[RMDB]
Structure probing data (2A3 and DMS) for a 177-nucleotide construct.
Values cover nucleotides 27 to 126.
The RNA was probed in 150 mM KOAc, 10 mM MgCl2 and 150 mM bicine (pH 8.5) at 24 C.
High DMS reactivity at an A or C suggests that its Watson-Crick edge is free.

RNA sequence: GGGAACGACUCGAGUAGAGUCGAAAAUCCAGACCCUCGCUAAGCUCCUGAGAAACGCCAGGUAAACGUUUGCCUACACACACCCUAAUCGCAACAUCAGGGUUGCGGCACGCCGGAAAAACGACACCAGUGUUUAAAGGUUCGCCUUUAAACACUGAAAAGAAACAACAACAACAAC
Reactivity to 2A3 in 0.01 (KOAc 150mM, MgCl2 10mM, bicine 150mM(pH8.5), 24C), signal-to-noise 2, nucleotides 027 to 126: u040c010c000a020g120a120c040c010c020u010c030g040c030u030a040a030g000c000u020c010c030u060g020a040g040a110a120a020c040g010c020c000a020g010g040u070a130a060a000c040g000u040u060u040g040c020c000u060a050c040a000c020a000c000a030c090c000c010u060a050a050u140c040g000c040a010a050c010a060u090c030a040g030g060g030u000u010g010c000g000g070c020a030c030g060c030c010g010g090a060a010a010a010a060c040g030a010c000a000c030
Reactivity to DMS in 0.01 (KOAc 150mM, MgCl2 10mM, bicine 150mM(pH8.5), 24C), signal-to-noise 3, nucleotides 027 to 126: u000c010c020a200g000a190c060c010c010u000c040g010c060u010a100a130g020c060u000c030c010u020g000a080g010a090a040a080c120g000c050c040a050g010g010u000a050a080a120c100g010u010u000u000g020c030c020u010a150c100a110c080a050c080a090c000c000c030u000a100a090u000c040g010c030a020a020c060a070u010c100a090g000g000g010u010u000g000c050g020g010c050a030c080g010c030c020g010g010a020a040a050a050a060c050g010a080c230a100c140